[RMDB]
Record summary:
Structure probing data (DMS and 2A3) for a 177-nucleotide construct. Values cover nucleotides 27 to 126. For 2A3, 1,776 sequencing reads were counted. Source: RMDB library OK2TRN, as collected in RNAgym. Conditions: 150 mM KOAc, 10 mM MgCl2 and 150 mM bicine (pH 8.5), 24 C. 2A3 adducts were read by reverse transcription with SuperScript II with manganese.
RNA sequence: GGGAACGACUCGAGUAGAGUCGAAAAACAUCUAGGCAAAUCCGGAUGUCAUACGUCUGAGAGGUGACGCAUAGCCGAUUGAGGCGAAUUCAGUGAUCCUAUGCUGCCAAGAAAAGCCUCUAGUGAGCUUUCACGGUUAAUUCGUUAACCGUGAAAGAAAAGAAACAACAACAACAAC
Reactivity to DMS in 0.01 (KOAc 150mM, MgCl2 10mM, bicine 150mM(pH8.5), 24C), signal-to-noise 4, nucleotides 027 to 126: a040c040a040u010c010u010a070g030g000c120a080a100a150u020c060c030g020g000a030u000g000u000c130a100u000a090c070g000u000c010u000g020a100g000a080g000g010u010g020a030c040g000c080a060u000a160g010c070c050g000a150u010u000g000a130g000g000c030g000a080a120u010u010c050a050g020u000g000a050u000c070c030u010a040u000g010c030u010g020c110c110a060a110g030a050a080a050a200g010c030c000u010c040u000a100g000u010g010a080g000
Reactivity to 2A3 in 0.01 (KOAc 150mM, MgCl2 10mM, bicine 150mM(pH8.5), 24C), signal-to-noise 2, nucleotides 027 to 126: a000c020a000u020c020u150a220g060g020c070a120a060a190u080c020c020g000g020a000u040g030u020c030a090u090a120c030g010u000c050u060g050a030g010a020g070g030u050g010a020c020g000c080a080u080a010g030c040c010g140a160u020u230g080a020g010g020c010g030a010a050u130u070c010a040g030u020g140a030u010c010c020u050a070u150g010c020u010g020c030c030a060a070g080a050a080a000a020g040c020c000u050c010u030a080g060u070g200a050g050